[RMDB]
The data come from the RNA Mapping Database (RMDB), library OK3TST. The record gives the reactivity of an RNA of 207 nucleotides to 2A3 and DMS. The reactions ran in a buffer of 150 mM KOAc, 10 mM MgCl2 and 150 mM bicine (pH 8.5), at 24 C. Values are in units of 0.01, from 0 to 300, in steps of 10.
RNA sequence: GGGAACGACUCGAGUAGAGUCGAAAAAAGCUCCUUUUGUCUGCAGGGGUCAUUUUUCUGGGGAUACUGAAGGGUUCUGGAGGUUAGCCAAAAUGAGACUGGGUGAUGUGGUGAGCAUGAUGAGAGCUGUUCUAAGGUAGAAACACCGUAAUGGCCCUGAUCCCAAUCUAUUCGUAGAUUGGGAUCAAAAAGAAACAACAACAACAAC
Reactivity to 2A3 in 0.01 (KOAc 150mM, MgCl2 10mM, bicine 150mM(pH8.5), 24C), signal-to-noise 2, nucleotides 027 to 156: a000a000g100c080u100c030c000u120u090u030u090g120u110c050u040g010c080a020g020g020g060g000u040c020a030u010u110u020u080u050c080u090g010g020g010g000a040u030a090c040u080g030a040a030g080g000g030u010u140c040u100g060g000a040g000g000u010u100a010g000c000c000a020a070a030a150u160g020a040g010a080c060u070g000g070g000u020g030a060u010g030u030g000g000u030g030a020g070c030a050u100g040a030u060g020a060g000a030g090c030u010g010u040u000c040u090a040a000g030g000u020a020g040a060a060a000c060a020c060c010g020u060a020a120u020g030g010c030c010c000
Reactivity to DMS in 0.01 (KOAc 150mM, MgCl2 10mM, bicine 150mM(pH8.5), 24C), signal-to-noise 2, nucleotides 027 to 156: a070a120g010c020u000c000c020u000u010u020u020g010u000c060u010g040c100a120g020g050g050g020u040c070a060u010u000u000u010u020c040u030g020g020g030g020a140u000a110c080u010g000a120a120g000g020g010u000u000c030u000g000g030a060g000g020u000u000a120g020c000c070a040a040a080a080u010g010a100g000a070c060u000g020g050g000u010g020a090u000g000u010g000g010u010g010a080g020c080a110u000g020a150u000g000a100g000a100g000c000u020g000u000u000c030u000a050a080g020g020u000a110g000a130a090a060c030a080c030c040g010u000a050a110u010g020g000c000c030c010